[RMDB]
RNA sequence: GGGAACGACUCGAGUAGAGUCGAAAAUGGGCAAAAACUGGAAGCAUUCCUUUGAAAACCGGCACAAGACAGGGCCGCCCUCUCUCACCACUCCCAUUCAACAUAGUAUUGGAAGUUCUGGCCAGGGCAAUCAGGUAGGAGAAAGAAAUAAAGGGUACCAUUGUUCCCUGUUCGCAGGGAACAAUGGAAAAGAAACAACAACAACAAC
Reactivity to 2A3 in 0.01 (KOAc 150mM, MgCl2 10mM, bicine 150mM(pH8.5), 24C), signal-to-noise 1, nucleotides 027 to 156: u030g000g000g070c000a000a020a000a060a100c040u060g100g000a100a020g030c030a040u010u090c000c000u080u010u090g080a120a130a020a020c020c020g020g000c050a030c040a090a000g060a150c010a070g050g000g000c000c030g030c000c000c000u000c000u000c000u030c000a070c000c010a010c020u030c060c000c000a000u090u150c010a050a070c020a130u130a090g110u130a070u110u120g020g010a010a050g000u020u020c030u080g040g030c000c010a030g000g000g020c010a040a110u070c060a070g010g010u010a030g030g020a030g040a020a090a000g040a010a100a010u210a090a070a020g030g000g010u080a030